RNA sequence: GGGAACGACUCGAGUAGAGUCGAAAAAGCGCUUCGGCGCUAUUCACCCGUAGGUCAUCUACCCACCCAUGAAUCAUCGUUGAAAGUUCCUUCGAAAGAGGGAACUGGAGAUGAUCAUGGAGGAUGACCUAAACGGCCAUCGUCUCUUCGGAGACAAUAUUAACCGAGUGUUCGCACUCGGUUAAUAAAAAGAAACAACAACAACAAC
Reactivity to DMS in 0.01 (KOAc 150mM, MgCl2 10mM, bicine 150mM(pH8.5), 24C), signal-to-noise 1, nucleotides 027 to 156: a030g030c030g050c050u000u000c300g020g040c000g030c000u010a010u000u030c020a230c060c000c020g010u000a000g020g020u000c000a020u010c000u000a000c020c020c080a300c200c020c020a050u000g000a080a070u000c000a000u000c010g020u000u000g000a150a200a070g000u000u010c010c000u010u000c000g020a100a070a300g000a030g000g020g030a010a040c000u000g000g010a190g000a000u000g000a050u000c000a010u010g020g000a110g000g000a040u000g010a000c010c000u000a010a020a050c010g020g030c050c040a070u010c090g010u000c020u000c000u000u010c300g020g000a020g020a000c000a070a160
Reactivity to 2A3 in 0.01 (KOAc 150mM, MgCl2 10mM, bicine 150mM(pH8.5), 24C), signal-to-noise 3, nucleotides 027 to 156: a000g010c030g000c070u060u150c300g110g000c010g010c000u030a060u090u200c100a100c020c000c020g010u020a020g000g000u000c000a010u030c020u090a240c040c040c030a070c030c000c000a010u000g070a120a160u040c000a000u010c020g230u220u030g000a010a010a010g000u010u000c010c010u010u020c000g050a080a030a030g010a000g000g020g000a000a010c000u000g000g000a030g000a000u010g000a010u010c000a000u000g030g000a000g000g040a000u000g000a000c000c000u000a010a010a010c020g050g030c090c050a210u210c080g010u020c010u000c000u000u060c220g100g010a010g010a020c040a000a010